[RMDB]
RNA sequence: GGGAACGACUCGAGUAGAGUCGAAAACUUUCGCUUCGGCGAAAGAAAAAAGCGUACUACCAAAGGCGUGAACUACGCUCGGGUCCUCCCAAAUAGGAGGAUCUCUAGCGUGGCGCACGCGCUUUGGUAUCGCAAAAAAGCCACAUUCGUGUGGCAACAGCUCAGUGUAGUUCGCUACACUGAGCUGAAAAGAAACAACAACAACAAC
Reactivity to 2A3 in 0.01 (KOAc 150mM, MgCl2 10mM, bicine 150mM(pH8.5), 24C), signal-to-noise 1, nucleotides 027 to 156: c000u000u010u000c010g020c010u060u020c220g160g040c000g000a000a010a000g060a080a250a000a010a000a000g030c030g000u060a070c030u000a000c030c030a000a000a000g000g010c000g000u000g000a000a010c000u010a010c000g020c000u000c000g000g000g000u010c000c000u050c000c020c060a090a110a180u300a060g010g000a010g100g010a100u090c120u010c030u050a000g000c000g000u000g020g000c000g010c010a010c000g000c070g010c000u010u000u000g010g010u000a000u000c000g000c030a020a020a020a020a020a020g030c010c010a030c010a040u080u150c160g170u080g000u000g020g000c000a020a000

This 207-nucleotide RNA was probed chemically with 2A3.
The 2A3 profile rests on 860 reads.
It was measured as part of the RMDB library RNAMAK.
For 2A3 the reverse transcriptase was SuperScript II with manganese.
Conditions: 150 mM KOAc, 10 mM MgCl2 and 150 mM bicine (pH 8.5), 24 C.